Chemical mapping of a 207-nucleotide RNA with DMS. For DMS the reverse transcriptase was MarathonRT. It was measured as part of the RMDB library M2RFPK. The RNA was probed in 150 mM KOAc, 10 mM MgCl2 and 150 mM bicine (pH 8.5) at 24 C.

RNA sequence: GGGAACGACUCGAGUAGAGUCGAAAACAGGUAGCCCAGACCUUCAAGGCUACGGUGCGUUGCGACGCACGGUCUGAUUCUUCACAACGACGUUGACCGCGUCUUCUUCCAUCCCCCUGGGGCAGUGUAUAACCAGCAGCCUUCGGGCUGCUGGUAAGCAAUAAACGUAGUUCGCUACGUUUAUUGCAAAAGAAACAACAACAACAAC
Reactivity to DMS in 0.01 (KOAc 150mM, MgCl2 10mM, bicine 150mM(pH8.5), 24C), signal-to-noise 1, nucleotides 027 to 156: c020a070g040g030u010a040g010c020c030c150a100g000a080c040c040u020u000c040a050a140g010g020c010u000a080c040g000g040u000g000c040g030u000u020g000c200g050a100c010g030c010a020c000g030g030u000c030u000g000a170u000u000c080u000u010c070a170c040a050a090c000g090a050c010g030u000u020g000a050c090c030g010c040g000u000c020u000u000c000u000u000c010c040a130u010c000c000c030c030c010u030g030g000g000g020c080a090g030u020g000u000a050u030a050a080c000c000a040g040c000a010g000c000c000u000u020c300g020g020g030c000u000g020c000u000g000g000u010a020a100